An RNA of 177 nucleotides, treated with DMS and read out base by base. Conditions: 150 mM KOAc, 10 mM MgCl2 and 150 mM bicine (pH 8.5), 24 C. Source: RMDB library TTRINS, as collected in RNAgym. Reactivities are given for positions 27 through 126.

[RMDB]
RNA sequence: GGGAACGACUCGAGUAGAGUCGAAAAGAUAUGGACCAAGUUCGGUUUGCAUAUACAAGCUUGGACCCGAGGUGUCGGAAACGACACUCGGCUAGCUUGAUAUGCAAACCGAACUUGGUCCUAAGUCCACAUUGCUUUACUUCGGUAAAGCAAUGUGAAAAGAAACAACAACAACAAC
Reactivity to DMS in 0.01 (KOAc 150mM, MgCl2 10mM, bicine 150mM(pH8.5), 24C), signal-to-noise 1, nucleotides 027 to 126: g000a090u000a300u010g010g010a000c000c010a020a010g020u000u010c030g030g000u000u000u000g020c000a000u000a010u000a130c000a020a000g020c010u000u010g050g020a140c300c000c010g000a030g020g010u010g010u000c000g010g010a080a110a270c000g010a030c010a030c010u010c010g010g000c030u000a020g030c000u000u000g000a020u000a010u010g010c020a000a010a010c000c000g020a000a010c000u000u010g000g010u000c000c000u000a000a060g010u000c040